[RMDB]
RNA sequence: GGGAACGACUCGAGUAGAGUCGAAAAGUUCGCUCGGCACUGGCGCGCGGUGCGCUUUUCGGUAUGGGCGCGCAUGGCGCAGGCGUUGCCAGAGCGCACCAGAUCGGCAGUGAGGAAGGCUCCAUCAUGAUGGGAGUGGAUUCGUCCACUCCCAUCAAAAAGAAACAACAACAACAAC
Reactivity to DMS in 0.01 (KOAc 150mM, MgCl2 10mM, bicine 150mM(pH8.5), 24C), signal-to-noise 1, nucleotides 027 to 126: g020u000u000c040g000c040u010c030g020g020c010a020c040u000g000g010c030g030c080g000c280g000g000u010g000c000g040c010u000u000u010u020c080g020g000u000a090u030g010g000g020c090g030c000g020c120a130u010g040g010c030g040c070a090g010g020c080g040u000u020g020c020c010a030g010a010g030c010g000c000a030c010c040a070g030a200u000c040g000g000c040a030g000u000g000a120g010g000a130a140g010g000c040u000c000c040a130u010c110a120